[RMDB]
Source: RMDB library RFM100, as collected in RNAgym. Structure probing data (DMS) for a 177-nucleotide construct. The DMS profile rests on 1,217 reads. Reactivities are rounded to 0.1 and cut off at 0 and 3. The reactions ran in a buffer of 150 mM KOAc, 10 mM MgCl2 and 150 mM bicine (pH 8.5), at 24 C.
RNA sequence: GGGAACGACUCGAGUAGAGUCGAAAAGCGGAGGCAAAAUUUGCACAGUAUAAAAUCUGCAAGUAGUGCUAUUGUUGGAAUCACCGUACCUAUUUAGGUUUACGCUCCAAGAUCGGUGGAUAGCAGCGGUAAAAGCACUCUUCGGAGUGCUUUUACCAAAAGAAACAACAACAACAAC
Reactivity to DMS in 0.01 (KOAc 150mM, MgCl2 10mM, bicine 150mM(pH8.5), 24C), signal-to-noise 1, nucleotides 027 to 126: g010c090g000g000a130g060g000c000a100a010a150a010u020u070u040g000c050a020c100a020g000u020a280u070a080a020a200a110u020c150u000g010c000a000a010g110u020a090g000u010g000c000u000a090u000u000g000u000u000g000g000a120a080u000c050a040c040c010g040u040a000c040c000u020a200u000u000u000a010g000g010u000u040u000a010c000g000c020u000c000c010a120a000g000a030u000c000g050g030u000g000g010a020u020a080g000c180a060g000c200